[RMDB]
RNA sequence: GGGAACGACUCGAGUAGAGUCGAAAAGGGAGAGCCGAGCAGAGGCAUAGCGAACUGCGCACGGUGAAGCCUUGAGGGAAGGCCGUAGGACCCGGGUUCGAUUCCCGGCUGCUCCACCGAAGGGCCAAGCAUCAUACGUGUUCGCACGUAUGAUGCUAAAAGAAACAACAACAACAAC
Reactivity to DMS in 0.01 (KOAc 150mM, MgCl2 10mM, bicine 150mM(pH8.5), 24C), signal-to-noise 4, nucleotides 027 to 126: g000g000g010a050g000a300g020c000c020g000a110g000c040a110g000a160g000g020c050a130u050a140g020c070g000a080a160c050u000g000c040g000c190a170c040g010g010u010g000a130a300g000c000c030u000u020g010a160g000g000g000a130a080g000g000c020c030g040u050a090g000g010a100c140c010c000g000g010g020u010u030c150g000a300u010u010c000c000c000g000g000c270u000g000c060u000c000c000a160c090c040g040a210a080g010g000g010c000c070a100
Reactivity to 2A3 in 0.01 (KOAc 150mM, MgCl2 10mM, bicine 150mM(pH8.5), 24C), signal-to-noise 3, nucleotides 027 to 126: g080g010g010a130g000a000g040c010c060g010a020g000c010a010g030a050g070g070c090a100u110a060g060c040g050a100a050c020u020g000c050g010c100a080c020g000g020u060g040a040a000g030c010c000u030u030g000a100g030g030g000a070a070g020g010c020c030g030u040a030g050g030a100c010c010c000g010g000g000u030u050c030g010a040u060u080c020c000c000g030g000c020u050g000c020u020c010c010a060c000c030g020a020a020g040g000g000c000c000a000
Structure probing data (DMS and 2A3) for a 177-nucleotide construct. It was measured as part of the RMDB library OK1LIB. Reactivities are rounded to 0.1 and cut off at 0 and 3. Reactivities are given for positions 27 through 126. The 2A3 profile rests on 2,922 reads. The reactions ran in a buffer of 150 mM KOAc, 10 mM MgCl2 and 150 mM bicine (pH 8.5), at 24 C.